Background
This 177-nucleotide RNA was probed chemically with 2A3 and DMS. The 2A3 profile rests on 3,410 reads. For DMS the reverse transcriptase was MarathonRT.

[RMDB]
RNA sequence: GGGAACGACUCGAGUAGAGUCGAAAACAGCGGCCACAACAUGAACCCUGUCUUCAUAUACAUGGUGCCGAAGCCCUGCCCCCGCGAGCGUAUCGUGCUCCCAGGUUUGUGCGCUCGGCCGGUACGCAUCGGUAUUAGCAUUCGUGCUAAUACCGAUAAAAGAAACAACAACAACAAC
Reactivity to 2A3 in 0.01 (KOAc 150mM, MgCl2 10mM, bicine 150mM(pH8.5), 24C), signal-to-noise 2, nucleotides 027 to 126: c030a000g040c020g010g000c010c030a020c010a090a070c020a050u080g020a030a040c030c000c010u050g050u080c040u060u050c050a050u140a020u020a220c060a070u090g070g000u080g090c060c030g070a080a020g010c000c000c000u030g040c000c000c000c000c000g050c020g020a030g010c020g020u050a010u110c020g040u090g040c000u030c000c030c000a010g040g040u050u110u080g060u050g000c030g030c000u020c030g020g000c000c040g000g010u000a010c020g000c020
Reactivity to DMS in 0.01 (KOAc 150mM, MgCl2 10mM, bicine 150mM(pH8.5), 24C), signal-to-noise 4, nucleotides 027 to 126: c080a090g000c070g010g020c000c030a060c060a080a080c110a100u010g000a100a070c050c030c040u000g000u010c070u000u000c110a050u010a110u010a100c100a070u000g010g030u000g010c040c050g010a090a140g010c030c000c010u000g020c030c010c020c030c050g010c130g000a090g000c020g010u010a030u000c040g010u010g010c010u000c000c020c040a100g000g000u000u010u010g000u010g010c040g010c050u010c080g020g000c010c020g010g010u010a010c060g010c070